[RMDB]
RNA sequence: GGGAACGACUCGAGUAGAGUCGAAAAGCAUUGGUGUUCGCACCAAUGCAAAAACCGUAGGGUACUGCGAAGUAAGACAGAUACCUCCUUCGAAAGAGGGAGUAUCAAUGACGUGGAGUACCCUAAACGGAAAAAACUGUAGCUUCGGCUACAGUAACUUCUAGUCAUGUUUCGACAUGACUAGAAGAAAAGAAACAACAACAACAAC
Reactivity to DMS in 0.01 (KOAc 150mM, MgCl2 10mM, bicine 150mM(pH8.5), 24C), signal-to-noise 2, nucleotides 027 to 156: g030c010a000u010u000g000g030u000g020u000u000c300g010c050a020c000c000a000a000u000g010c000a010a040a050a130a100c000c000g010u000a040g000g010g000u000a040c000u000g020c000g000a170a270g040u010a060a170g010a150c150a230g010a060u010a010c080c050u010c000c010u000u000c010g010a180a130a300g000a020g000g040g000a000g000u000a020u000c030a150a140u000g000a060c050g010u010g040g000a130g000u000a000c000c000c000u000a000a030a060c010g040g000a000a040a090a160a120a040c000u010g000u000a000g020c020u000u010c300g060g000c000u000a000c010a000g020u010a020a080
Reactivity to 2A3 in 0.01 (KOAc 150mM, MgCl2 10mM, bicine 150mM(pH8.5), 24C), signal-to-noise 3, nucleotides 027 to 156: g000c000a000u000u010g030g010u010g030u060u140c260g030c120a000c000c000a000a000u010g000c000a020a050a010a020a020c000c000g000u020a020g010g000g010u000a000c010u070g210c030g020a150a040g080u160a080a050g110a080c100a050g020a010u010a030c020c150u000c020c000u000u000c010g070a100a070a050g010a010g000g000g000a000g000u000a000u000c010a000a110u090g020a020c040g030u110g050g150a020g000u000a000c040c000c000u000a000a010a000c010g020g040a080a000a030a130a010a040c000u000g010u010a000g020c000u050u060c300g080g000c000u000a000c000a000g000u000a000a050